[RMDB]
RNA sequence: GGGAACGACUCGAGUAGAGUCGAAAAAGCAGCGGGCACAGGUGUGGAAAGAGACUUGUGGAGACUGAGGCGCCUCAGGAGACUGAGGAGAGAGGAGUGACGGAUACGACUACGGCCACACAUGCCGGGUCCGACGUGAUUUCGAUCACGUCGGACCAAAAGAAACAACAACAACAAC
Reactivity to 2A3 in 0.01 (KOAc 150mM, MgCl2 10mM, bicine 150mM(pH8.5), 24C), signal-to-noise 1, nucleotides 027 to 126: a000g020c010a010g000c040g060g050g000c000a010c000a130g130g030u000g040u030g070g010a000a010a010g060a010g000a000c000u040u080g020u050g040g040a150g010a050c080u040g020a010g030g000c040g050c000c000u020c000a070g000g000a030g030a070c000u020g000a000g030g000a020g000a000g060a000g020g000a010g010u030g040a040c140g000g000a060u080a160c040g000a000c030u180a090c080g030g020c040c020a120c050a050c000a080u120g000c000c000g000

The record gives the reactivity of an RNA of 177 nucleotides to 2A3. The RNA was probed in 150 mM KOAc, 10 mM MgCl2 and 150 mM bicine (pH 8.5) at 24 C. The 2A3 profile rests on 584 reads.